[RMDB]
RNA sequence: GGGAACGACUCGAGUAGAGUCGAAAACUAAUCUCGAAGAGCGUUUUGGGGGAUACGCACAGUGACCAUUCAAGCUGAUUGUGACACUGUGUAGGGUAGGUACUGAUUGGUUCUUCAAUCAGUAGAUAAGCUGUAAUGCUUUCGAGCAUUACAGCUUAAAAGAAACAACAACAACAAC
Reactivity to 2A3 in 0.01 (KOAc 150mM, MgCl2 10mM, bicine 150mM(pH8.5), 24C), signal-to-noise 4, nucleotides 027 to 126: c040u060a100a120u060c020u010c050g070a090a030g040a010g040c010g020u030u050u060u140g030g000g000g000g000a070u110a060c080g000c000a010c000a000g010u020g050a210c010c010a040u040u020c030a110a100g140c150u140g100a050u020u080g040u100g070a030c010a000c000u010g000u000g000u060a010g000g000g050u060a040g050g020u020a000c010u000g000a000u000u000g030g040u160u140c020u090u040c040a000a000u000c000a000g000u000a010g020a020u070
Reactivity to DMS in 0.01 (KOAc 150mM, MgCl2 10mM, bicine 150mM(pH8.5), 24C), signal-to-noise 4, nucleotides 027 to 126: c100u020a080a110u030c020u000c020g010a050a050g010a060g010c030g010u000u000u040u010g020g000g010g000g020a170u040a050c120g000c020a010c000a010g000u000g000a110c020c000a020u000u000c010a140a160g010c290u050g000a040u000u010g000u040g040a120c010a000c000u000g010u000g000u000a030g000g000g000u020a100g000g010u000a000c000u000g000a010u000u000g010g020u050u050c240u030u030c000a010a000u000c010a010g010u000a010g000a120u000

Annotation
An RNA of 177 nucleotides, treated with 2A3 and DMS and read out base by base. Values are in units of 0.01, from 0 to 300, in steps of 10. It was measured as part of the RMDB libraries RFM100 and RFMREP. The reactions ran in a buffer of 150 mM KOAc, 10 mM MgCl2 and 150 mM bicine (pH 8.5), at 24 C. For 2A3 the reverse transcriptase was SuperScript II with manganese.